[RMDB]
RNA sequence: GGGAACGACUCGAGUAGAGUCGAAAAGAUAUGGAGGCAGGACAUGGAGGCCAUCGGAAACGAUGGUCUCCAACAGCCUGCUCCUAAGUCAAACAGAAGGGUCAUGGUUCGCCAUGACCCUUCUGAACGUACGUUCCUUCUUCGGAAGGAACGUACGAAAAGAAACAACAACAACAAC
Reactivity to DMS in 0.01 (KOAc 150mM, MgCl2 10mM, bicine 150mM(pH8.5), 24C), signal-to-noise 2, nucleotides 027 to 126: g020a050u000a300u000g000g000a010g010g000c000a000g000g000a050c100a170u010g000g000a010g010g010c000c000a020u000c000g000g000a120a090a190c000g000a000u000g010g000u000c000u000c000c010a000a000c230a300g000c000c000u000g010c010u000c000c000u000a010a150g000u010c020a050a170a290c020a020g020a040a000g000g000g010u000c000a010u000g010g020u000u010c300g000c000c000a000u000g000a000c010c000c000u000u000c000u000g000a020a120